[RMDB]
RNA sequence: GGGAACGACUCGAGUAGAGUCGAAAAACUGUCCAAACAAAAGUCGGAAAAAUGAGCAAUGGGAGCCGACUUGGCCACAUAUGGCCAUUUUCUGGCCAUUUCCAUUGCGUGCCUGGUCGGAAUACUACGUACCUAGCGUGUUCGCACGCUAGGUACGAAAAGAAACAACAACAACAAC
Reactivity to 2A3 in 0.01 (KOAc 150mM, MgCl2 10mM, bicine 150mM(pH8.5), 24C), signal-to-noise 2, nucleotides 027 to 126: a000c070u040g030u070c000c050a070a080a070c100a020a240a060a000g040u070c080g130g150a030a080a000a050a070u280g050a040g100c010a020a050u080g000g070g010a050g070c000c000g000a040c000u010u010g000g000c040c020a110c010a060u170a170u160g030g010c000c000a000u030u030u000u100c120u070g000g000c000c050a040u070u000u000c040c000a020u030u150g010c040g000u030g000c000c010u050g050g010u050c040g050g110a060a040u080a140c050u010a020
Reactivity to DMS in 0.01 (KOAc 150mM, MgCl2 10mM, bicine 150mM(pH8.5), 24C), signal-to-noise 1, nucleotides 027 to 126: a090c070u000g040u040c000c030a020a120a100c120a030a070a150a010g000u010c010g000g000a010a030a000a100a080u010g000a190g010c070a010a010u030g030g050g000a130g000c000c000g010a020c060u000u010g000g000c010c000a080c120a050u060a030u000g080g010c000c000a040u050u040u000u000c160u010g010g000c030c220a050u030u040u010c060c130a060u020u010g010c100g000u000g000c020c020u030g000g000u000c050g030g000a060a010u000a080c080u000a160